[RMDB]
RNA sequence: GGGAACGACUCGAGUAGAGUCGAAAAGAAAAGAAGGAGGCCGUAGUAGAUCAGUGGUGACGAAAGUCAACUCCACCUCCGUAGGUCACCUCUGAUCCGUAUUAUGGCCGAUGGAGGUGGAGAGAAAGGCUUAUCAAUACUUCGGUAUUGAUAAGCCAAAAGAAACAACAACAACAAC
Reactivity to DMS in 0.01 (KOAc 150mM, MgCl2 10mM, bicine 150mM(pH8.5), 24C), signal-to-noise 2, nucleotides 027 to 126: g020a170a140a010a030g020a080a070g000g000a130g000g000c040c000g020u010a030g010u000a080g000a020u020c000a040g000u000g020g020u000g000a010c020g030a090a090a100g040u020c080a150a110c020u000c000c000a000c000c000u000c000c000g010u000a100g000g010u000c000a020c060c020u010c030u000g040a060u000c090c300g040u020a030u000u010a030u000g000g040c000c000g030a060u010g000g010a040g000g080u000g000g000a000g010a120g000a090a110a010
Reactivity to 2A3 in 0.01 (KOAc 150mM, MgCl2 10mM, bicine 150mM(pH8.5), 24C), signal-to-noise 2, nucleotides 027 to 126: g050a020a090a010a090g120a080a000g130g060a050g030g000c010c010g030u000a010g040u060a020g030a050u020c010a000g000u060g060g020u030g010a060c040g120a110a010a000g050u130c100a070a030c050u010c000c000a000c000c000u000c000c020g010u020a030g000g120u030c000a020c000c000u000c020u000g020a030u080c040c040g020u090a040u070u090a020u100g010g000c000c000g010a000u020g010g000a000g000g000u010g000g000a020g000a000g000a000a040a000